[RMDB]
RNA sequence: GGGAACGACUCGAGUAGAGUCGAAAACUGCACCUGAGUUCUAGGUGUGUGAGAGUGUGCGUGUAUGCUUGUGUCUGUGGGAAAGGUAAGGCUAUUGCAAAUAGCUGGCAGGCAGGGGUCCAUAGAAAUAUACAGAACUUUUCGAAGUUCUGUAUAUAAAAGAAACAACAACAACAAC
Reactivity to 2A3 in 0.01 (KOAc 150mM, MgCl2 10mM, bicine 150mM(pH8.5), 24C), signal-to-noise 2, nucleotides 027 to 126: c020u040g000c010a010c010c000u040g090a100g200u160u070c080u180a010g010g020u010g010u010g030u060g030a100g000a010g040u080g010u030g030c060g010u080g030u050a030u110g040c020u080u060g030u020g020u030c020u020g040u080g030g020g000a070a090a070g050g050u100a050a030g020g000c000u030a020u060u160g090c040a130a000a090u030a030g000c020u030g010g030c000a020g020g000c000a020g030g030g000g000u010c000c010a000u030a070g030a020a190
Reactivity to DMS in 0.01 (KOAc 150mM, MgCl2 10mM, bicine 150mM(pH8.5), 24C), signal-to-noise 8, nucleotides 027 to 126: c060u000g010c030a020c010c000u000g010a180g010u010u010c090u000a030g010g010u000g020u010g010u010g000a100g010a070g010u000g020u000g010c060g020u000g000u010a050u010g000c040u000u000g020u000g010u000c040u000g020u000g010g000g010a080a090a080g010g010u010a080a130g010g010c010u000a020u010u010g010c210a060a070a050u000a030g000c010u000g000g020c070a070g010g010c060a050g000g000g010g010u000c030c040a060u000a070g010a080a100